An RNA of 177 nucleotides, treated with DMS and 2A3 and read out base by base. Reactivities are given for positions 27 through 126.
[RMDB]
RNA sequence: GGGAACGACUCGAGUAGAGUCGAAAAGAUAUGGAGGUGCAAGUCGCUCAGGACGAAUUCGGAAACGAACUAUCCUGGGAGGCGUCACCACCUCCUAAGUCAAAACGUUUACGUUCGCGUAAACGAAGAUUUAGAGGAGCUUCGGCUCCUCUAAAUCAAAAGAAACAACAACAACAAC
Reactivity to DMS in 0.01 (KOAc 150mM, MgCl2 10mM, bicine 150mM(pH8.5), 24C), signal-to-noise 2, nucleotides 027 to 126: g000a030u010a300u010g000g000a020g020g030u000g000c050a210a170g000u000c010g010c000u030c000a000g000g020a020c070g000a070a140u000u000c010g010g010a090a070a180c000g010a010a040c130u000a260u010c000c000u000g010g000g000a030g000g020c020g020u000c230a140c300c010a000c000c000u000c000c000u000a010a090g000u000c020a070a100a080a160c040g010u010u000u000a010c010g020u000u010c180g010c020g000u030a000a010a020c000g010a030a080
Reactivity to 2A3 in 0.01 (KOAc 150mM, MgCl2 10mM, bicine 150mM(pH8.5), 24C), signal-to-noise 1, nucleotides 027 to 126: g040a030u120a070u120g000g000a000g020g010u000g000c060a080a110g000u020c000g010c030u020c010a000g020g010a010c120g110a100a300u030u060c020g050g020a040a100a100c000g010a010a020c030u060a030u000c000c000u000g030g010g000a010g000g000c000g080u030c020a030c050c010a010c000c010u000c000c000u030a140a050g000u000c020a030a060a010a050c000g000u000u010u000a040c030g010u010u090c300g000c020g110u000a010a000a010c010g030a050a050